[RMDB]
The record gives the reactivity of an RNA of 177 nucleotides to DMS. The reactions ran in a buffer of 150 mM KOAc, 10 mM MgCl2 and 150 mM bicine (pH 8.5), at 24 C. Reactivities are given for positions 27 through 126. For DMS the reverse transcriptase was MarathonRT.
RNA sequence: GGGAACGACUCGAGUAGAGUCGAAAAGAUAUGGAUGCAUUGUCAGAUCUGAGGCGAGCAACAGCUACGCUCGGAAACGAGCGUAGACAUGCUCGUGUAGGAUCUUGGAUUUAUGCAUCCUAAGUCAGUUUACUACGUCGUUCGCGACGUAGUAAACAAAAGAAACAACAACAACAAC
Reactivity to DMS in 0.01 (KOAc 150mM, MgCl2 10mM, bicine 150mM(pH8.5), 24C), signal-to-noise 2, nucleotides 027 to 126: g000a050u000a300u000g000g010a000u000g000c010a010u010u000g010u010c050a010g000a000u000c000u010g000a210g000g010c000g000a000g000c000a060a100c300a210g010c020u010a010c010g020c000u010c000g000g000a080a110a180c000g020a000g020c000g010u020a010g000a040c080a140u000g010c000u000c000g010u000g000u000a300g000g020a000u000c000u010u000g000g020a040u000u010u000a000u010g010c010a010u000c000c010u000a000a040g010u000c030a110